This 177-nucleotide RNA was probed chemically with 2A3 and DMS. DMS adducts were read by reverse transcription with MarathonRT. For 2A3, 1,853 sequencing reads were counted.
RNA sequence: GGGAACGACUCGAGUAGAGUCGAAAAGAUAUGGAUCUGUACGAAUCUUUAUGUACAAUGAUGUACAAUAACGUCGGAAACGACGUUAUUGUAUUGAGUACAUUGAGACUAUACAGAUCCUAAGUCAGUGAACUAUUGGGUUCGCCCAAUAGUUCACAAAAGAAACAACAACAACAAC
Reactivity to 2A3 in 0.01 (KOAc 150mM, MgCl2 10mM, bicine 150mM(pH8.5), 24C), signal-to-noise 1, nucleotides 027 to 126: g040a000u070a040u110g010g000a030u060c000u000g030u010a060c150g140a300a300u030c030u060u060u020a010u000g010u000a020c060a120a230u300g250a100u130g200u010a000c000a000a000u000a000a000c000g010u000c020g020g110a080a040a080c010g000a010c000g040u010u000a000u000u000g010u000a000u000u050g000a000g010u000a000c000a000u020u010g010a000g010a030c040u010a000u010a000c000a000g000a000u000c000c000u000a000a020g040u000c070a060
Reactivity to DMS in 0.01 (KOAc 150mM, MgCl2 10mM, bicine 150mM(pH8.5), 24C), signal-to-noise 1, nucleotides 027 to 126: g020a050u010a160u000g010g000a020u000c010u010g000u020a000c090g000a020a070u000c000u000u000u000a010u000g000u000a020c000a200a150u010g010a100u030g010u000a000c010a000a000u000a010a030c000g000u000c020g000g000a130a040a140c000g030a020c000g030u010u010a010u000u010g000u010a000u000u000g000a300g020u000a010c010a000u000u000g000a030g000a000c080u000a300u000a000c000a000g020a000u010c020c010u000a010a040g000u000c000a140
The DMS profile rests on 1,136 reads. The reactions ran in a buffer of 150 mM KOAc, 10 mM MgCl2 and 150 mM bicine (pH 8.5), at 24 C.